[RMDB]
RNA sequence: GGGAACGACUCGAGUAGAGUCGAAAAUCAGAAUGAAAUGGAUGAUGGCAAUGAAAUAUCCAAUCACAGCAGACAAGAGAAUAAUGGAGAUGAUUCCUGAAAGGAAUGAGCAAGGACAAACGCUUUGGAGCAAGACAAAUGAUGCUGGGUCGGACAGCACCAUAUGAUGAUUCGUCAUCAUAUGGUGAAAAGAAACAACAACAACAAC
Reactivity to 2A3 in 0.01 (KOAc 150mM, MgCl2 10mM, bicine 150mM(pH8.5), 24C), signal-to-noise 8, nucleotides 027 to 156: u070c020a020g070a050a060u100g030a080a040a070u120g010g020a030u060g020a020u060g050g040c070a080a060u100g060a070a080a040u140a040u030c030c000a000a010u100c050a040c030a070g010c020a000g030a100c030a080a050g060a020g030a090a020u120a100a040u090g020g010a040g010a030u120g000a010u080u020c010c020u060g050a100a070a030g020g020a030a050u080g010a030g010c030a040a030g030g010a050c040a050a090a000c080g010c020u050u040u070g030g010a040g020c020a020a010g030a040c030a000a090a030u090g030a010u040g040c010u010g020g020g000u030c020g010g010a010c020a020g020
Reactivity to DMS in 0.01 (KOAc 150mM, MgCl2 10mM, bicine 150mM(pH8.5), 24C), signal-to-noise 4, nucleotides 027 to 156: u010c030a110g010a120a120u000g020a060a090a120u010g000g030a060u000g010a070u000g010g000c060a070a100u020g010a040a080a100u000a090u000c030c040a050a110u000c050a110c040a080g030c040a080g020a070c040a050a100g010a100g010a070a040u010a060a110u000g020g010a070g030a090u010g020a120u000u000c030c000u000g020a050a090a090g010g000a050a030u000g010a080g010c020a040a060g000g020a100c060a050a040a070c070g010c040u000u000u000g020g020a170g010c030a020a070g000a060c060a000a060a110u010g010a070u000g010c020u000g010g010g010u000c010g000g020a090c040a110g000